[RMDB]
RNA sequence: GGGAACGACUCGAGUAGAGUCGAAAAGGAUUACGUUACGAUAUCUGCGUUCGUAAUCCGGUAUAUCAACGCAGAUAUCGUAAGAUAUACCACGACGGUGGACAUGCGAAAGCAUGUCCAUCGUCGAGGUGGAAGUUGGCUUCGGCCAACUUCCACCAAAAGAAACAACAACAACAAC
Reactivity to 2A3 in 0.01 (KOAc 150mM, MgCl2 10mM, bicine 150mM(pH8.5), 24C), signal-to-noise 1, nucleotides 027 to 126: g090g050a060u120u170a060c120g050u050u010a010c020g000a000u020a000u030c000u030g040c010g020u020u060c080g040u060a030a100u040c020c000g030g040u000a020u000a000u080c010a000a000c010g010c000a020g030a030u000a000u000c000g000u000a000a000g020a000u060a020u000a060c010c000a010c020g000a000c000g000g030u000g000g000a010c000a000u000g000c000g080a140a000a000g000c000a000u000g000u000c000c000a000u000c000g000u000c000g000a000